Source: RMDB library TTRDES, as collected in RNAgym. Chemical mapping of a 177-nucleotide RNA with DMS. DMS adducts were read by reverse transcription with MarathonRT. Values cover nucleotides 27 to 126. For DMS, 1,216 sequencing reads were counted.

RNA sequence: GGGAACGACUCGAGUAGAGUCGAAAAGAUAUGGAUAUCGGAAGACGCGAUAAGCCUACACUCGGAAACGAGUGCGGGCUUUUGACGCGUCCCGAUAUCCUAAGUCAAACCACGCUUCGGCGUGGAAGCAAUGACUGUGGUUCGCCACAGUCAUUGCAAAAGAAACAACAACAACAAC
Reactivity to DMS in 0.01 (KOAc 150mM, MgCl2 10mM, bicine 150mM(pH8.5), 24C), signal-to-noise 1, nucleotides 027 to 126: g010a030u000a150u000g000g010a000u000a000u000c000g020g010a200a090g010a020c010g050c000g000a180u000a010a010g020c010c000u000a060c000a000c000u000c000g020g020a050a060a250c000g010a040g010u010g000c050g030g010g040c010u000u000u000u010g000a130c030g040c000g000u010c010c010c010g000a040u000a000u000c000c020u000a000a000g000u000c000a160a170a250c000c000a000c010g010c030u000u000c220g030g000c000g020u000g030g000a060a150